[RMDB]
RNA sequence: GGGAACGACUCGAGUAGAGUCGAAAAUUCGGUCCUUUGGAGCGGACCGUUUGCUCCGUCAGGAUGUGGAGGUCUCGCGCCCUCCUUUGCGCGUAUGUACAUCGAUACGGUUAUGUCGCCUUUGUGUCGGCGUUUGACACUUACACAUACCGGAUAAACCUAUACCAUUAUUCGUAAUGGUAUAGGUAAAAGAAACAACAACAACAAC
Reactivity to DMS in 0.01 (KOAc 150mM, MgCl2 10mM, bicine 150mM(pH8.5), 24C), signal-to-noise 5, nucleotides 027 to 156: u000u000c020g020g020u000c000c010u010u000u000g040g010a170g040c190g010g020a030c010c040g010u000u010u000g010c010u000c020c030g030u010c090a090g010g010a080u000g030u010g000g000a060g030g000u000c050u000c070g020c040g020c100c010c020u000c010c010u000u010u000g010c080g040c050g050u010a040u000g020u000a040c120a110u000c070g010a260u000a090c070g020g010u000u000a040u000g010u000c030g020c040c020u000u000u000g020u000g050u000c040g020g020c080g040u000u010u010g020a050c030a040c010u000u000a060c010a020c010a040u000a090c010c010g020g020a050u000a060a150
Reactivity to 2A3 in 0.01 (KOAc 150mM, MgCl2 10mM, bicine 150mM(pH8.5), 24C), signal-to-noise 9, nucleotides 027 to 156: u050u020c020g000g000u030c020c000u110u140u270g220g060a120g060c090g010g000a000c000c000g000u020u010u040g040c040u020c020c010g070u060c060a050g020g010a010u010g010u010g000g010a000g000g000u000c000u010c030g010c000g000c010c000c000u010c000c000u000u010u000g060c070g000c010g020u180a020u070g030u010a010c040a150u050c060g130a170u100a300c130g020g030u060u040a020u060g070u040c010g000c010c000u030u040u010g170u050g020u060c010g000g030c030g010u010u010u040g050a050c110a030c280u020u240a050c010a000c000a010u070a300c000c010g000g010a030u110a030a100
This 207-nucleotide RNA was probed chemically with DMS and 2A3. The data come from the RNA Mapping Database (RMDB), library OK3TST. The RNA was probed in 150 mM KOAc, 10 mM MgCl2 and 150 mM bicine (pH 8.5) at 24 C. For 2A3 the reverse transcriptase was SuperScript II with manganese.